[RMDB]
RNA sequence: GGGAACGACUCGAGUAGAGUCGAAAAUACUCCGGGCUGGCGUCGUAUACCAUCGUGCCCGCGAGUAGGUCGGGCAUCACGUUUCGGGGUCCGAGGGCGAUGACGACCAGAUAGAAGACGAGCCCGAGACUAAUCGAGGAUUCGUCCUCGAUUAGUCAAAAGAAACAACAACAACAAC
Reactivity to DMS in 0.01 (KOAc 150mM, MgCl2 10mM, bicine 150mM(pH8.5), 24C), signal-to-noise 7, nucleotides 027 to 126: u020a070c020u000c020c020g000g000g010c020u010g010g010c060g010u000c080g020u020a130u040a130c090c080a090u020c080g030u010g000c000c010c020g010c100g010a060g020u010a030g010g000u010c000g010g010g000c010a040u000c070a060c030g000u000u020u000c020g000g000g030g010u030c050c010g000a050g000g000g010c120g000a040u010g010a120c030g000a040c010c020a120g010a100u030a060g010a130a100g000a060c070g010a100g000c000c000c010g000a180
Reactivity to 2A3 in 0.01 (KOAc 150mM, MgCl2 10mM, bicine 150mM(pH8.5), 24C), signal-to-noise 9, nucleotides 027 to 126: u100a020c010u010c010c000g010g020g010c020u090g090g080c020g030u050c020g050u140a070u080a190c040c040a120u130c040g050u070g020c010c010c010g040c120g010a020g040u050a040g000g050u040c010g000g050g060c010a050u050c050a040c080g020u030u080u070c060g010g030g030g070u040c020c010g020a050g020g020g020c040g040a040u050g030a020c010g020a020c010c000a010g040a050u140a040g150a120a010g050a020c040g010a010g020c000c000c010g040a050